[RMDB]
RNA sequence: GGGAACGACUCGAGUAGAGUCGAAAAUAGGAUGGGAUACUGUGUCACUACAUCCCGGAAGUAACAUUGCACGAUGGCUGCCCAUUACAAGGCUGCAGUCUCUAGAGUUGCCUUGGUGGAGACCGAGGUGACUUGUGAGAUAGUGAAACCCGUACCGCUUAUGGUGUAGGUUCGCCUACACCAUAAGAAAAGAAACAACAACAACAAC
Reactivity to 2A3 in 0.01 (KOAc 150mM, MgCl2 10mM, bicine 150mM(pH8.5), 24C), signal-to-noise 7, nucleotides 027 to 156: u110a020g030g020a020u040g030g010g030a030u060a200c050u100g050u050g040u130c040a030c070u100a030c020a050u030c000c020c020g020g010a060a030g020u050a040a030c040a080u070u170g020c050a010c060g090a080u100g100g000c030u040g020c010c010c010a030u100u110a070c060a110a090g030g000c080u060g000c010a000g010u000c000u000c020u060a050g010a010g040u000u010g010c000c000u000u010g040g000u020g060g160a140g090a050c010c000g010a000g000g000u010g010a010c000u010u020g020u010g000a020g010a020u060a050g040u050g040a060a040a040c020c000c010g020u070a110c030c030g020
Reactivity to DMS in 0.01 (KOAc 150mM, MgCl2 10mM, bicine 150mM(pH8.5), 24C), signal-to-noise 4, nucleotides 027 to 156: u000a050g000g010a100u010g000g020g000a130u000a060c070u000g020u010g020u000c030a060c010u000a080c030a100u010c000c000c000g000g000a120a100g030u000a040a050c020a080u010u010g030c040a090c060g010a110u000g030g010c020u000g020c050c030c030a100u000u010a110c120a070a070g000g030c010u000g020c010a140g020u000c010u000c010u000a300g020a030g020u000u000g000c010c020u000u000g020g030u010g010g010a270g020a040c000c000g000a010g000g030u000g010a000c010u000u000g000u000g000a030g000a070u000a100g030u000g010a080a050a050c020c000c010g000u010a160c050c040g000